Structure probing data (DMS and 2A3) for a 177-nucleotide construct. Conditions: 150 mM KOAc, 10 mM MgCl2 and 150 mM bicine (pH 8.5), 24 C. As a SHAPE reagent, 2A3 marks flexible, mostly unpaired nucleotides at the ribose 2'-OH.

[RMDB]
RNA sequence: GGGAACGACUCGAGUAGAGUCGAAAAGUGUCUGUACUCAUACGCUUGAAAUCGAGUGUAGUAUAGGCAAAGCGUCGAGUAAGUUGGAGUGUCCUGUUCCAAUACAGGCUAAACUCGACAUUACGGCACAUGGUUGCUUAUUCGUAAGCAACCAUGUAAAAGAAACAACAACAACAAC
Reactivity to DMS in 0.01 (KOAc 150mM, MgCl2 10mM, bicine 150mM(pH8.5), 24C), signal-to-noise 5, nucleotides 027 to 126: g010u000g010u010c000u000g000u010a000c020u020c220a130u010a100c030g000c050u000u010g000a150a180a120u050c100g000a250g010u020g000u020a040g020u000a000u000a010g000g000c000a040a130a090g020c160g010u000c030g020a010g000u010a030a130g010u000u010g000g000a080g010u010g000u040c000c000u000g000u000u000c150c200a070a040u030a030c040a020g000g000c080u000a030a070a050c010u000c010g000a010c010a070u010u020a030c120g000g010c210
Reactivity to 2A3 in 0.01 (KOAc 150mM, MgCl2 10mM, bicine 150mM(pH8.5), 24C), signal-to-noise 4, nucleotides 027 to 126: g090u030g000u000c000u000g020u010a000c010u040c140a080u070a080c000g020c000u040u080g150a130a150a150u300c060g010a010g000u030g010u050a000g000u000a000u010a010g020g000c000a000a060a020g120c090g020u040c000g030a040g030u020a110a020g010u060u120g130g010a020g020u020g080u160c000c000u020g020u080u000c120c050a010a020u140a090c020a010g010g000c060u070a120a080a000c000u000c000g000a010c000a000u020u100a040c050g020g000c050